[RMDB]
RNA sequence: GGGAACGACUCGAGUAGAGUCGAAAAUAAACCCGGAGGGAAGCAAUUCAGCACGGGGACCUGUCCGUGGGGAGGCGAAACGGAUGGCACAUCUUCUGGCUUUGGCAAGUAUUGUAUGGGGCCUAGUACGAUCUUUAAGGUUCGCCUUAAAGAUCGUAAAAGAAACAACAACAACAAC
Reactivity to 2A3 in 0.01 (KOAc 150mM, MgCl2 10mM, bicine 150mM(pH8.5), 24C), signal-to-noise 2, nucleotides 027 to 126: u130a000a070a040c010c010c040g010g040a040g030g080g000a020a020g040c040a060a130u090u120c030a010g020c030a010c030g010g000g000g030a020c000c020u030g070u090c020c020g020u080g010g050g000g000a050g020g030c040g020a060a030a000c010g010g000a020u020g050g000c040a020c020a130u020c020u130u020c020u040g000g000c000u090u040u040g040g000c020a000a080g100u060a070u090u170g040u030a090u090g040g000g020g000c010c000u030a060g040u020
Reactivity to DMS in 0.01 (KOAc 150mM, MgCl2 10mM, bicine 150mM(pH8.5), 24C), signal-to-noise 3, nucleotides 027 to 126: u020a050a060a170c020c010c020g000g000a210g000g010g010a060a070g010c140a080a100u030u010c100a110g010c050a170c030g020g000g010g000a100c070c030u000g010u030c030c060g000u020g010g000g000g000a050g000g000c060g000a020a060a060c080g000g010a090u000g000g020c020a040c100a060u000c050u010u020c050u000g000g030c030u010u010u000g020g000c030a050a070g010u000a070u030u010g050u020a030u000g010g000g020g010c050c030u000a060g020u000
Structure probing data (2A3 and DMS) for a 177-nucleotide construct.
Conditions: 150 mM KOAc, 10 mM MgCl2 and 150 mM bicine (pH 8.5), 24 C.
DMS (dimethyl sulfate) methylates the pairing face of unpaired adenines and cytosines.
Source: RMDB libraries RFM100 and RFMREP, as collected in RNAgym.
For 2A3 the reverse transcriptase was SuperScript II with manganese.